This 177-nucleotide RNA was probed chemically with 2A3 and DMS. Source: RMDB library OK2TST, as collected in RNAgym. The DMS profile rests on 24,551 reads. In probing experiments dimethyl sulfate is read out at A N1 and C N3, which are open when not base-paired. For DMS the reverse transcriptase was MarathonRT. The reactions ran in a buffer of 150 mM KOAc, 10 mM MgCl2 and 150 mM bicine (pH 8.5), at 24 C.
RNA sequence: GGGAACGACUCGAGUAGAGUCGAAAAGCGGCAUUGUGUUUGCCGGACUCGCGGUGGCUUAUCGAACUCGCCCGGUCUUUGUCCCGAGUCACGACAACGACCCGGUGGCGCGGUAUCGCGCCAUGGAGCAUUAAAUAGGGUUCGCCCUAUUUAAUGCAAAAGAAACAACAACAACAAC
Reactivity to 2A3 in 0.01 (KOAc 150mM, MgCl2 10mM, bicine 150mM(pH8.5), 24C), signal-to-noise 9, nucleotides 027 to 126: g050c020g050g010c030a050u070u150g110u080g070u280u120u080g020c020c000g020g030a060c040u040c050g050c060g040g040u060g040g010c030u060u080a070u160c040g030a050a040c020u010c050g030c000c010c000g000g010u010c010u040u090u080g040u010c010c020c010g010a030g020u070c040a030c100g060a020c030a050a020c040g050a040c010c020c010g060g000u020g010g000c010g000c040g050g050u170a140u300c020g000c000g010c000c000a000u020g020g030a070
Reactivity to DMS in 0.01 (KOAc 150mM, MgCl2 10mM, bicine 150mM(pH8.5), 24C), signal-to-noise 8, nucleotides 027 to 126: g010c030g010g000c030a050u010u010g020u010g010u000u010u000g010c020c020g010g000a070c050u000c050g020c120g020g030u000g000g010c040u000u000a100u010c060g010a070a080c050u000c050g010c030c020c040g010g010u000c020u000u010u000g010u000c000c030c030g010a070g000u000c050a120c090g010a040c060a030a060c060g010a110c050c010c060g030g040u000g000g010c020g020c000g010g000u010a100u010c020g020c010g010c000c000a010u000g010g010a230